Structure probing data (2A3 and DMS) for a 177-nucleotide construct. In probing experiments dimethyl sulfate is read out at A N1 and C N3, which are open when not base-paired. As a SHAPE reagent, 2A3 marks flexible, mostly unpaired nucleotides at the ribose 2'-OH. DMS adducts were read by reverse transcription with MarathonRT. Values cover nucleotides 27 to 126. The DMS profile rests on 2,488 reads. The 2A3 profile rests on 1,637 reads. It was measured as part of the RMDB library OK2TST.

RNA sequence: GGGAACGACUCGAGUAGAGUCGAAAAAUGAAGUGGGAUGUGCAGGAUUCCACGAGUCAAGGAGUGCAGAGAGUAGCUCACUGACAUCAGUGCUGCGAAAGUCCACAGGUGGUUGGGACCGGGAGGCGAUGAGGACGUAGUUCGCUACGUCCUCAUCAAAAGAAACAACAACAACAAC
Reactivity to 2A3 in 0.01 (KOAc 150mM, MgCl2 10mM, bicine 150mM(pH8.5), 24C), signal-to-noise 2, nucleotides 027 to 126: a010u090g000a050a000g020u030g000g050g000a070u040g060u140g080c030a030g050g040a130u260u060c030c000a030c060g010a000g000u000c020a000a070g050g020a000g000u090g020c200a030g060a020g010a010g210u080a010g040c010u000c000a090c020u000g030a020c010a090u180c050a070g050u030g030c030u010g010c020g020a080a010a010g040u040c020c000a000c000a000g010g050u110g020g070u170u170g070g010g030a100c080c080g000g020g010a020g030g090c080
Reactivity to DMS in 0.01 (KOAc 150mM, MgCl2 10mM, bicine 150mM(pH8.5), 24C), signal-to-noise 3, nucleotides 027 to 126: a100u000g010a180a140g030u010g000g020g020a040u000g040u010g040c060a060g000g010a110u000u010c280c010a040c020g010a070g010u010c040a060a090g010g010a060g010u010g000c070a110g030a130g010a130g020u000a140g000c010u000c020a010c020u010g010a090c150a120u010c020a070g020u000g010c040u010g010c020g010a060a080a140g000u000c020c020a030c070a070g000g020u020g000g010u020u010g010g000g000a130c090c090g010g020g000a050g000g010c180